[RMDB]
RNA sequence: GGGAACGACUCGAGUAGAGUCGAAAACGUGAUGGGUGAUAAUGCAAUACAAGAUCCUUUUGUUCCACCAAGAUACAACGCACCGUCUGAGGGAAGAAAUAGUAUAAUUUAUUCACAACUGCCUCCACUUUACGAUACCACAAAACUAUUUUUAAUAGUAAAAGUGAAGUUUCGACUUCACUUUUACAAAAGAAACAACAACAACAAC
Reactivity to 2A3 in 0.01 (KOAc 150mM, MgCl2 10mM, bicine 150mM(pH8.5), 24C), signal-to-noise 4, nucleotides 027 to 156: c050g020u030g020a040u060g010g010g060u030g070a070u050a100a040u120g020c040a070a030u070a090c020a040a050g040a090u060c030c000u040u060u060u070g070u060u000c020c010a070c010c020a040a010g010a040u090a040c040a060a030c060g020c030a050c000c020g050u060c030u060g030a080g020g060g000a010a060g020a040a090a040u120a050g050u050a050u040a170a060u090u110u090a100u110u110c050a030c010a160a060c040u070g000c000c000u010c000c020a060c010u070u090u080a020c040g020a030u040a030c000c030a010c040a040a140a080a010c050u090a130u160u120u080u100u180a120a170u300a040
Reactivity to DMS in 0.01 (KOAc 150mM, MgCl2 10mM, bicine 150mM(pH8.5), 24C), signal-to-noise 1, nucleotides 027 to 156: c070g030u000g030a090u010g020g020g050u010g010a080u000a070a140u010g010c060a050a100u000a200c030a050a150g000a060u020c000c010u000u030u010u040g030u000u000c000c010a140c100c040a080a130g010a150u010a080c020a060a080c040g050c020a020c000c030g030u000c030u030g010a040g030g020g000a080a090g010a070a080a040u000a090g030u010a090u020a070a130u000u000u020a090u030u000c030a060c070a100a060c060u000g000c000c010u000c010c020a050c040u010u010u000a060c040g020a170u000a060c000c000a070c010a050a050a060a050c030u000a010u020u000u020u000u020a020a080u020a120